The data come from the RNA Mapping Database (RMDB), library OK2TST. Chemical mapping of a 177-nucleotide RNA with DMS and 2A3. The 2A3 profile rests on 2,831 reads. For DMS the reverse transcriptase was MarathonRT.
RNA sequence: GGGAACGACUCGAGUAGAGUCGAAAAACAGAACUGGACCUAUAAUCGUCUCUAGUUCUGUAAUGUCUAAAUGCAUUGAUAAAAUCUGAUAUGUGCUUAUUUAGAUAUUCUGGUUUAUCAAAGGUUAAUGCUUCCAUAAAUUCGUUUAUGGAAGCAUAAAAGAAACAACAACAACAAC
Reactivity to DMS in 0.01 (KOAc 150mM, MgCl2 10mM, bicine 150mM(pH8.5), 24C), signal-to-noise 7, nucleotides 027 to 126: a040c010a010g000a020a010c000u000g000g010a030c130c100u000a190u010a110a110u010c210g010u010c080u000c030u000a010g010u000u000c000u000g000u000a030a030u000g020u000c010u000a010a030a020u000g010c010a040u000u000g010a100u010a060a070a070a300u010c100u010g010a090u010a060u000g010u000g010c050u010u020a060u000u000u010a020g010a020u000a020u000u000c050u000g000g020u000u000u000a060u000c120a060a070a100g010g010u010u000a070
Reactivity to 2A3 in 0.01 (KOAc 150mM, MgCl2 10mM, bicine 150mM(pH8.5), 24C), signal-to-noise 4, nucleotides 027 to 126: a000c010a000g020a010a000c010u020g010g030a010c010c030u110a100u230a300a140u170c060g090u020c020u000c020u090a010g000u020u000c000u000g000u010a000a030u040g010u020c010u020a000a050a020u020g000c020a000u010u050g020a030u140a130a220a040a110u040c080u090g070a050u070a040u210g020u010g010c020u060u040a020u060u050u010a020g020a020u010a030u070u030c030u070g110g050u030u120u050a090u150c090a100a080a300g060g020u070u150a090